Structure probing data (2A3 and DMS) for a 177-nucleotide construct. Reactivities are rounded to 0.1 and cut off at 0 and 3. Source: RMDB library OK1LIB, as collected in RNAgym.

RNA sequence: GGGAACGACUCGAGUAGAGUCGAAAAGAAGGCCGUAGUAAAGAAAAGGGUGAGCGUUUAAUUAAUUUAACUCCAUGGAGCUGGAGGGCUCCGUAGUUAAGCGCUCACCCGUAUUAUGGCCGAGAAAGGCAUUACAUUACUUCGGUAAUGUAAUGCCAAAAGAAACAACAACAACAAC
Reactivity to 2A3 in 0.01 (KOAc 150mM, MgCl2 10mM, bicine 150mM(pH8.5), 24C), signal-to-noise 3, nucleotides 027 to 126: g140a040a040g000g010c010c000g000u020a010g030u040a030a180a140g110a130a250a040a020g020g000g000u000g000a010g000c020g020u000u010u060a060a050u060u050a020a100u050u060u100a080a040c090u090c130c040a070u170g030g000a020g020c050u040g030g180a110g080g080g020c010u010c020c000g000u000a000g000u000u000a000a000g000c000g000c000u000c000a000c000c010c000g000u000a000u000u010a000u000g000g000c010c000g000a000g000a010a040a010
Reactivity to DMS in 0.01 (KOAc 150mM, MgCl2 10mM, bicine 150mM(pH8.5), 24C), signal-to-noise 3, nucleotides 027 to 126: g000a190a190g000g020c010c010g030u000a000g040u000a020a300a140g000a140a150a170a170g010g000g000u000g010a010g000c000g010u000u000u000a040a020u010u000a020a080u070u020u030a040a110c220u030c120c100a110u030g000g000a020g030c010u010g000g050a100g000g000g000c030u010c010c010g010u020a000g000u010u010a020a010g000c000g000c000u000c000a000c000c000c000g000u030a000u000u000a010u000g000g000c000c000g000a060g000a080a120a060